[RMDB]
RNA sequence: GGGAACGACUCGAGUAGAGUCGAAAACAAAACUGACCAGCUAUGAGGUCAUACAUCGUCAUAGUAAAACAAAACAAAACUGACCAGAUAUGAGGUCAUACAUCGUCAUAUCAAACAAAACAACAAACCGUAGCGACUCAUUCGUGAGUCGCUACGGAAAAGAAACAACAACAACAAC
Reactivity to 2A3 in 0.01 (KOAc 150mM, MgCl2 10mM, bicine 150mM(pH8.5), 24C), signal-to-noise 2, nucleotides 027 to 126: c030a000a120a150a030c190u230g000a000c000c000a010g000c000u000a000u010g000a010g000g000u010c010a020u120a070c190a110u090c230g000u000c000a000u000a000g030u040a050a050a050a050c120a010a090a150a070c120a210a150a070a090c130u100g000a000c000c000a000g000a000u000a000u030g000a000g000g010u000c060a000u140a000c020a060u210c100g000u030c000a000u000a040u000c000a000a080a030c080a010a030a000a000c190a020a010c040a040a070a030